[RMDB]
RNA sequence: GGGAACGACUCGAGUAGAGUCGAAAACGGCAGCUCGCACAGCUCGUGGGGGAUGACCCGGAUCUCGGCGCCGGUGUUGGUGAAGGUGACCCUGCCGUCGCCGAUGACGUAGCUCAGCCGGCGGUUGGAAGACUUAUAGCUUCGGCUAUAAGUCUUCAAAAGAAACAACAACAACAAC
Reactivity to DMS in 0.01 (KOAc 150mM, MgCl2 10mM, bicine 150mM(pH8.5), 24C), signal-to-noise 6, nucleotides 027 to 126: c090g010g010c050a060g000c020u000c090g010c020a040c140a150g010c120u020c130g020u010g010g000g000g010g000a100u030g010a160c040c020c010g010g000a120u010c050u010c020g010g010c010g010c030c000g000g000u000g020u040u020g010g030u010g000a110a100g010g000u030g000a080c090c020c080u010g000c010c010g000u000c010g020c010c000g010a030u030g010a060c040g000u040a070g000c040u010c110a170g020c010c010g000g010c030g000g000u000u000g010
Reactivity to 2A3 in 0.01 (KOAc 150mM, MgCl2 10mM, bicine 150mM(pH8.5), 24C), signal-to-noise 8, nucleotides 027 to 126: c000g020g000c010a010g010c020u030c050g090c010a030c020a060g070c030u060c100g040u060g010g070g000g010g010a070u140g090a110c000c010c000g040g040a080u030c020u000c030g020g000c000g000c000c010g010g020u050g050u090u130g020g020u080g070a180a090g090g100u170g050a080c010c000c020u040g010c030c020g000u000c000g000c000c020g010a040u080g000a000c030g050u090a010g000c010u020c070a020g020c020c000g020g000c030g020g020u040u080g060
Source: RMDB libraries RFM100 and RFMREP, as collected in RNAgym.
An RNA of 177 nucleotides, treated with DMS and 2A3 and read out base by base.
High 2A3 reactivity points to a flexible backbone, as in loops and unpaired stretches.
The reactions ran in a buffer of 150 mM KOAc, 10 mM MgCl2 and 150 mM bicine (pH 8.5), at 24 C.